Chemical mapping of a 207-nucleotide RNA with 2A3. The data come from the RNA Mapping Database (RMDB), library M2RFPK. The RNA was probed in 150 mM KOAc, 10 mM MgCl2 and 150 mM bicine (pH 8.5) at 24 C. Reactivities are given for positions 27 through 156.

[RMDB]
RNA sequence: GGGAACGACUCGAGUAGAGUCGAAAAAAGAAAUCAAAAAAGAUUUCUGAGACAAACGCGCUUCACAAUGUGCGGCAAAGAAACAUUGUUUAUGCAAAGGCACUUCGCAAUGUGUGCUCAAACAUUGACUACCGUCCACCGUUCGCGGUGGACGGAACACAGUCAGGACGUUCGCGUCCUGACUGUGAAAAGAAACAACAACAACAAC
Reactivity to 2A3 in 0.01 (KOAc 150mM, MgCl2 10mM, bicine 150mM(pH8.5), 24C), signal-to-noise 1, nucleotides 027 to 156: a000a020g010a000a000a000u030c050a050a000a240a120a070a000g000a000u000u000u000c030u000g060a020g010a020c060a040a090a010c050g000c000g000c030u030u000c010a000c000a000a000u000g000u030g000c010g030g130c040a110a180a000g100a070a050a000c010a000u020u000g020u050u110u070a110u060g050c040a040a040a190g080g000c030a030c020u100u190c110g000c090a040a030u100g030u000g020u020g050c040u040c160a030a050a000c040a020u000u060g040a040c040u100a060c030c000g000u030c000c000a010c000c010g010u040u020c210g000c000g110g030u000g000g000a000c000g000g000a000a000